[RMDB]
RNA sequence: GGGAACGACUCGAGUAGAGUCGAAAACAGUUCCGCAGCCAGGCGGCGGGCGAGCGGCGAAGCCUUGUGGCGCACUUCACCGGAGGCGGGCGCGCUUACUGCUGGUGCGGCUGGCACCGGCGAGGCACGGUACGUAGCAGUUCGCUGCUACGUACCGAAAAGAAACAACAACAACAAC
Reactivity to 2A3 in 0.01 (KOAc 150mM, MgCl2 10mM, bicine 150mM(pH8.5), 24C), signal-to-noise 1, nucleotides 027 to 126: c010a030g060u060u050c020c030g010c040a010g030c060c010a100g100g060c050g010g000c000g000g080g020c070g050a050g030c010g010g030c020g040a040a020g030c020c000u070u080g120u120g020g000c010g030c020a050c040u100u050c040a020c030c010g060g000a050g050g040c000g020g000g000c060g000c000g000c030u070u120a120c060u130g070c000u010g000g000u020g000c000g150g130c130u080g150g000c000a020c010c040g000g010c020g000a050g000g000c070a020
Reactivity to DMS in 0.01 (KOAc 150mM, MgCl2 10mM, bicine 150mM(pH8.5), 24C), signal-to-noise 1, nucleotides 027 to 126: c190a190g020u000u020c010c010g000c060a110g000c010c070a070g010g030c050g000g000c030g020g000g030c060g020a080g010c040g000g010c060g010a160a130g030c020c040u000u000g010u000g000g040c060g030c110a090c030u000u000c030a050c060c040g010g010a100g000g010c040g020g000g000c040g000c060g000c020u010u010a080c140u000g030c070u000g000g000u000g020c040g030g000c110u050g000g020c030a020c020c000g010g020c020g000a010g000g020c070a220
This 177-nucleotide RNA was probed chemically with 2A3 and DMS. The DMS profile rests on 1,513 reads.